[RMDB]
Chemical mapping of a 207-nucleotide RNA with DMS and 2A3.
2A3 adducts were read by reverse transcription with SuperScript II with manganese.
For DMS the reverse transcriptase was MarathonRT.

RNA sequence: GGGAACGACUCGAGUAGAGUCGAAAAAGCCUUGUGCAGCUGUGUGGAUUAGCAUGGCCCUGAAUCCAUUCCUCAUAGGGAAAGAGGCUUCCUGAGUCAGGUGUCACUUGAAAAAGCUGAAGGGAAGAGUAAGACUUUGCCAGUGGAGCCCAGCAGAACGUAAUACCUACUUCGGUAGGUAUUACGUAAAAGAAACAACAACAACAAC
Reactivity to DMS in 0.01 (KOAc 150mM, MgCl2 10mM, bicine 150mM(pH8.5), 24C), signal-to-noise 1, nucleotides 027 to 156: a090g000c000c000u010u010g030u000g020c070a050g000c050u020g010u020g020u010g020g030a150u000u000a160g000c020a050u000g030g000c010c000c020u020g000a090a090u000c030c030a160u010u000c020c010u000c060a160u000a130g000g040g020a050a100a080g000a120g010g010c010u000u000c010c000u000g000a130g020u000c030a060g000g030u010g000u000c070a020c050u000u000g010a050a110a070a060a060g050c020u000g000a120a150g000g030g030a070a110g010a070g000u000a060a070g000a140c020u010u000u000g020c030c020a100g020u000g050g010a150g000c010c000c010a110g050c060a070g010a070
Reactivity to 2A3 in 0.01 (KOAc 150mM, MgCl2 10mM, bicine 150mM(pH8.5), 24C), signal-to-noise 3, nucleotides 027 to 156: a000g050c020c000u070u060g070u080g020c010a060g020c090u010g030u030g010u030g110g070a110u080u110a040g060c110a110u070g020g010c000c000c030u050g050a030a030u000c020c010a030u040u040c000c020u050c040a100u230a160g000g000g080a010a070a050g080a040g000g030c000u060u000c010c040u060g020a060g060u050c040a020g000g010u050g070u090c030a030c020u030u050g050a090a030a010a050a020g020c050u010g030a030a030g060g000g010a040a040g010a030g000u070a070a000g000a010c000u040u090u060g010c040c020a010g000u050g040g030a030g000c020c000c000a030g030c010a010g070a030